[RMDB]
RNA sequence: GGGAACGACUCGAGUAGAGUCGAAAAUCAGACAUGCACUUUUGCCCACUUCAUGGUUCUUUAGCACCAACUACUUUCCAGGAGAAUUUCUCUAAUCAUCCGGCUGAUGUGUGGUUGUGAUUAUUUAUUACAGAGCCUCAUCCAUUGUAACAUCACCUCAUUCAGUAUCCUUCGGGAUACUGAAUGAAAAAGAAACAACAACAACAAC
Reactivity to 2A3 in 0.01 (KOAc 150mM, MgCl2 10mM, bicine 150mM(pH8.5), 24C), signal-to-noise 4, nucleotides 027 to 156: u100c010a000g050a070c010a020u090g040c030a040c050u070u100u170u140g020c010c000c000a040c030u090u070c060a100u070g070g000u080u050c020u020u100u080a040g040c040a030c060c010a070a060c040u080a010c020u020u060u070c060c030a040g020g030a040g060a120a110u050u170u050c050u000c010u060a080a140u080c040a060u010c020c020g050g040c080u020g020a060u020g050u020g010u020g020g030u050u030g010u010g060a010u010u070a050u100u190u070a090u080u020a030c020a020g050a010g040c010c020u010c000a040u020c020c020a040u020u070g080u120a050a020c010a060u130c000a000c110c030
Reactivity to DMS in 0.01 (KOAc 150mM, MgCl2 10mM, bicine 150mM(pH8.5), 24C), signal-to-noise 2, nucleotides 027 to 156: u000c040a060g010a090c030a080u000g010c110a110c090u000u000u000u000g000c030c000c020a140c080u050u000c070a060u010g000g030u000u000c050u030u010u000a100g010c040a060c070c050a060a120c040u000a050c020u000u000u000c020c040a120g040g010a070g020a120a120u010u000u000c000u000c000u000a070a090u000c030a080u000c030c050g000g030c080u010g030a040u020g000u000g030u000g020g050u010u030g050u010g020a070u000u000a100u010u020u000a050u010u010a110c060a100g010a080g000c010c000u000c030a100u000c040c030a200u020u000g000u030a050a010c050a050u000c000a050c120c040

This 207-nucleotide RNA was probed chemically with 2A3 and DMS. For DMS, 2,990 sequencing reads were counted. 2A3 adducts were read by reverse transcription with SuperScript II with manganese. It was measured as part of the RMDB library OK3TST. High 2A3 reactivity points to a flexible backbone, as in loops and unpaired stretches. DMS adducts were read by reverse transcription with MarathonRT. For 2A3, 2,165 sequencing reads were counted.